[RMDB]
RNA sequence: GGGAACGACUCGAGUAGAGUCGAAAAUUGAUAUCUGCUAAAACCCGGUGCAUUCAUCAAUGCAGGUUAAGCCAAAGGGAUGUCCCGACCGGAGGCCGACAAUCCAGGGAACCGGCUGUCAUCACGUAAAACCGUCAGUUCUUCGGAACUGACGGAACUCCUACUAUGCGUUCGCGCAUAGUAGGAGAAAAGAAACAACAACAACAAC
Reactivity to 2A3 in 0.01 (KOAc 150mM, MgCl2 10mM, bicine 150mM(pH8.5), 24C), signal-to-noise 2, nucleotides 027 to 156: u040u020g000a010u020a110u060c080u080g000c040u040a020a040a180a210c000c020c020g050g040u000g010c000a030u000u140c030a010u100c040a120a080u040g000c010a050g100g020u080u130a050a000g000c000c000a010a010a010g000g000g030a030u070g040u030c000c000c000g030a000c030c010g000g030a000g000g020c000c000g000a000c030a100a050u100c060c050a030g000g040g010a010a050c010c060g020g000c000u010g040u040c050a030u040c030a000c090g150u110a010a060a000a170c010c000g000u000c000a000g000u000u000c000u010u100c130g090g000a010a000c000u000g000a000c000g000g000a000a000
Reactivity to DMS in 0.01 (KOAc 150mM, MgCl2 10mM, bicine 150mM(pH8.5), 24C), signal-to-noise 1, nucleotides 027 to 156: u000u000g000a170u000a020u000c010u010g030c010u000a090a080a070a100c060c060c030g010g150u230g000c000a090u000u000c090a080u000c100a110a190u000g000c000a030g030g020u000u000a050a070g000c030c000a040a300a300g060g000g000a110u000g030u000c000c010c010g070a030c040c000g020g050a300g130g000c010c020g010a140c060a030a070u000c000c020a110g000g040g000a130a030c070c060g040g010c010u000g050u040c060a140u000c090a050c100g010u000a070a070a130a100c100c010g000u000c000a000g000u000u000c060u000u000c300g030g000a000a060c000u000g000a000c000g000g000a000a000
Source: RMDB library M2RFPK, as collected in RNAgym. This 207-nucleotide RNA was probed chemically with 2A3 and DMS. The 2A3 profile rests on 925 reads. Values cover nucleotides 27 to 156. The reactions ran in a buffer of 150 mM KOAc, 10 mM MgCl2 and 150 mM bicine (pH 8.5), at 24 C.